[RMDB]
RNA sequence: GGGAACGACUCGAGUAGAGUCGAAAAAGCAGUUAUAUCGAAAAACGAUAUAACUGCAAAUAGGAUGGGGUGUGAUAGGUGGCACGGAGAAUUUUGGAUUCUCAGGGAUGGGUUCGAUUCUCAUAGUCCUAAAAGCAGUGUGUCACGACGCACUGCACAGCGUUUUAAUAUUCGUAUUAAAACGCUGAAAAGAAACAACAACAACAAC
Reactivity to 2A3 in 0.01 (KOAc 150mM, MgCl2 10mM, bicine 150mM(pH8.5), 24C), signal-to-noise 5, nucleotides 027 to 156: a000g000c000a010g000u000u010a010u000a000u010c020g080a180a050a080a050a130c010g000a000u000a000u000a000a000c000u010g000c000a000a000a010u070a000g020g020a040u060g020g010g000g020u050g010u030g040a110u100a110g060g020u050g050g040c050a010c050g070g010a010g010a020a020u050u140u190u250g100g060a020u050u010c040u010c070a040g040g030g040a060u100g010g000g010u060u070c020g020a040u110u000c010u000c020a020u060a060g050u040c010c030u090a090a090a020a030g000c010a000g000u010g000u010g010u040c050a030c230g070a010c000g020c010a000c000u000g000c000a000
Reactivity to DMS in 0.01 (KOAc 150mM, MgCl2 10mM, bicine 150mM(pH8.5), 24C), signal-to-noise 2, nucleotides 027 to 156: a170g000c000a000g000u000u020a000u000a010u010c010g010a140a080a130a180a260c050g020a030u000a000u010a000a020c000u010g000c030a010a020a090u010a120g000g000a120u000g010g010g030g010u000g020u000g010a120u000a130g010g020u010g030g010c070a050c040g040g000a040g010a050a010u010u000u000u010g020g010a120u010u010c030u000c020a080g010g000g020a100u000g000g000g000u000u010c030g010a220u000u000c020u000c030a140u000a130g020u010c010c030u010a050a060a110a130g010c000a020g010u000g030u000g010u010c070a120c200g020a250c040g030c000a030c000u000g010c000a200